[RMDB]
RNA sequence: GGGAACGACUCGAGUAGAGUCGAAAAGCGCUGGCUAUGUGUGGGGCGACUUGCUGUCAAGAGUAAAGUUGGUGCCUUUGUGAUGGGCAGCUUAUUUGGAAUAACUUUUUCCAUGUUAUAAAGGCAGGGAUAAUAUAAUAUUCGUAUUAUAUUAUCCAAAAGAAACAACAACAACAAC
Reactivity to 2A3 in 0.01 (KOAc 150mM, MgCl2 10mM, bicine 150mM(pH8.5), 24C), signal-to-noise 3, nucleotides 027 to 126: g050c010g000c030u030g050g020c020u070a100u160g120u000g030u050g010g020g000g010c030g010a060c010u030u050g000c010u020g030u030c020a050a030g050a040g070u100a130a070a040g000u020u010g030g020u030g000c000c000u000u000u030g010u010g010a040u010g000g010g010c010a000g000c030u020u050a060u020u040u040g010g030a000a010u020a020a050c030u090u000u000u020u000c000c000a010u030g000u000u070a030u010a020a010a000g010g000c010a000g040
Reactivity to DMS in 0.01 (KOAc 150mM, MgCl2 10mM, bicine 150mM(pH8.5), 24C), signal-to-noise 4, nucleotides 027 to 126: g010c070g000c020u020g030g020c040u010a030u020g010u010g020u010g010g010g010g000c040g010a080c050u000u010g000c010u010g000u010c090a070a070g000a130g000u010a050a070a090g010u000u000g010g040u010g000c020c010u000u000u000g030u020g000a040u000g000g010g000c120a030g000c070u010u010a050u010u010u010g000g010a000a000u020a080a120c130u010u010u000u010u010c000c010a030u020g000u010u010a030u000a030a030a020g000g000c040a050g000